[RMDB]
RNA sequence: GGGAACGACUCGAGUAGAGUCGAAAAGCUCAACGCUUCGGCGUUGAGCAAAGAAAAUCCGUGCGAAGGGCUGGGUAGGGACGCACGGAAACCCACCGCCGAAAACUGAGAGGUUCGCCUCUCAGAACAUCUAGGGAUGGUUCGCCAUCCCUAGAUGAAAAGAAACAACAACAACAAC
Reactivity to DMS in 0.01 (KOAc 150mM, MgCl2 10mM, bicine 150mM(pH8.5), 24C), signal-to-noise 1, nucleotides 027 to 126: g020c000u000c010a000a020c010g010c040u000u020c140g010g040c020g040u000u000g030a010g030c000a000a020a130g000a090a080a110a050u000c000c000g020u000g000c000g000a180a100g020g000g010c160u000g000g000g010u000a070g040g010g030a160c030g000c010a010c000g000g000a010a020a050c030c010c010a120c090c090g000c060c030g000a080a040a130a150c010u000g020a020g000a010g000g000u010u010c140g000c000c000u000c000u000c000a020g000a040a060
Chemical mapping of a 177-nucleotide RNA with DMS. The RNA was probed in 150 mM KOAc, 10 mM MgCl2 and 150 mM bicine (pH 8.5) at 24 C.